[RMDB]
RNA sequence: GGGAACGACUCGAGUAGAGUCGAAAACUUUGGUGAGUCCCUAUCUAGUAUAGCAAUCCACCAAGCAGGUGACUUCACACAAUUCAGGUUCUCAUAGAAAAUGCGCCCUGACUUGACAGGUAUGGUCACCUAUAGGUAUAUUCGUAUACCUAUAGGUAAAAGAAACAACAACAACAAC
Reactivity to 2A3 in 0.01 (KOAc 150mM, MgCl2 10mM, bicine 150mM(pH8.5), 24C), signal-to-noise 9, nucleotides 027 to 126: c020u060u030u080g020g000u030g030a080g060u060c020c020c000u010a030u010c050u050a050g150u130a050u020a060g030c040a040a080u030c020c010a010c010c000a030a010g060c040a030g050g070u070g030a040c010u080u070c070a020c010a010c010a060a060u050u030c010a020g000g030u130u060c030u000c020a050u080a080g230a070a120a030a020u080g020c020g030c010c000c000u010g020a040c020u040u040g020a050c040a070g030g070u120a080u150g050g010u020c010
Reactivity to DMS in 0.01 (KOAc 150mM, MgCl2 10mM, bicine 150mM(pH8.5), 24C), signal-to-noise 9, nucleotides 027 to 126: c050u010u010u010g000g010u000g010a080g000u010c300c300c000u000a020u010c030u050a120g020u040a010u000a020g010c140a090a100u040c050c010a020c010c010a020a030g020c170a060g010g010u010g000a030c020u010u000c060a070c070a130c030a030a060u010u000c020a020g010g000u010u020c020u010c020a050u010a120g020a080a060a090a060u010g000c110g010c300c010c010u010g000a030c040u000u000g000a130c070a090g010g010u010a040u010g010g000u000c040
Notes: The record gives the reactivity of an RNA of 177 nucleotides to 2A3 and DMS. Conditions: 150 mM KOAc, 10 mM MgCl2 and 150 mM bicine (pH 8.5), 24 C. Reactivities are given for positions 27 through 126. Reactivities are rounded to 0.1 and cut off at 0 and 3. For DMS, 55,040 sequencing reads were counted. DMS adducts were read by reverse transcription with MarathonRT.